[RMDB]
RNA sequence: GGGAACGACUCGAGUAGAGUCGAAAAGUGGUGCGCGGAGAGGGUAACCACCGGCGCGCGUCACUGAUAUAUCCACCGGGGGGUAAGGGGAGAAAAGGAUACAGCGCGACGAAGUUAUCACGCUGCCGAAAUGUACCCACAUUCGUGUGGGUACAAACAAAAUUGACUUGUUCGCAAGUCAAUUUUGAAAAGAAACAACAACAACAAC
Reactivity to DMS in 0.01 (KOAc 150mM, MgCl2 10mM, bicine 150mM(pH8.5), 24C), signal-to-noise 2, nucleotides 027 to 156: g030u000g010g000u000g020c040g030c000g030g030a220g000a170g010g010g000u000a110a070c120c080a070c010c000g010g000c010g000c020g020c000g010u000c020a040c020u000g010a090u000a120u010a110u000c020c030a140c030c000g010g030g000g000g040g000u000a070a060g010g020g000g010a100g000a100a080a110a130g010g010a270u010a100c040a030g030c020g010c030g000a080c020g000a080a140g020u010u010a300u000c010a030c010g010c000u010g000c000c070g000a100a070a200u000g040u000a010c000c000c000a010c000a110u010u010c200g050u000g020u000g020g000g050u000a000c000a010a060a120
Reactivity to 2A3 in 0.01 (KOAc 150mM, MgCl2 10mM, bicine 150mM(pH8.5), 24C), signal-to-noise 2, nucleotides 027 to 156: g000u000g030g020u020g020c030g010c010g060g110a210g060a140g070g020g020u090a090a140c040c000a030c040c000g070g050c000g000c000g000c000g000u000c000a000c000u000g000a010u070a020u060a030u140c020c000a050c100c000g020g000g000g000g000g010u050a030a020g030g050g000g000a030g050a010a120a020a030g020g000a030u080a170c010a010g010c010g010c010g030a040c020g020a120a040g070u130u080a100u080c000a020c050g000c010u030g050c000c020g010a050a070a020u050g000u000a000c000c060c000a000c000a010u040u070c190g080u050g000u000g030g000g000u000a000c000a000a010a000
An RNA of 207 nucleotides, treated with DMS and 2A3 and read out base by base. Reactivities are rounded to 0.1 and cut off at 0 and 3. The data come from the RNA Mapping Database (RMDB), library M2RFPK.